An RNA of 177 nucleotides, treated with DMS and read out base by base. The data come from the RNA Mapping Database (RMDB), library 15KREP. For DMS the reverse transcriptase was MarathonRT. The RNA was probed in 150 mM KOAc, 10 mM MgCl2 and 150 mM bicine (pH 8.5) at 24 C.
[RMDB]
RNA sequence: GGGAACGACUCGAGUAGAGUCGAAAAUGAGUUGGAAGCUGCGCAGAAAGCCUAUCAGGAAGCUAUGGACUCUGGUGACACCUCACCACAAGUUCUUAAGGCUUUGCAGAAGGCUGUUAAUAUAGCUGAAAUGACACAAGUUCGCUUGUGUCAUUUCAAAAGAAACAACAACAACAAC
Reactivity to DMS in 0.01 (KOAc 150mM, MgCl2 10mM, bicine 150mM(pH8.5), 24C), signal-to-noise 2, nucleotides 027 to 126: u010g000a120g000u010u000g010g000a130a160g050c060u030g040c170g000c050a070g000a080a130a070g010c000c000u010a110u010c050a100g040g000a020a010g000c010u010a090u000g010g000a010c000u010c300u000g000g020u000g010a030c300a110c300c300u010c000a000c000c000a020c250a040a050g000u010u000c000u020u000a080a190g010g010c000u000u010u010g040c070a070g010a030a050g000g040c020u000g010u000u000a090a100u000a070u010a090g020c140u000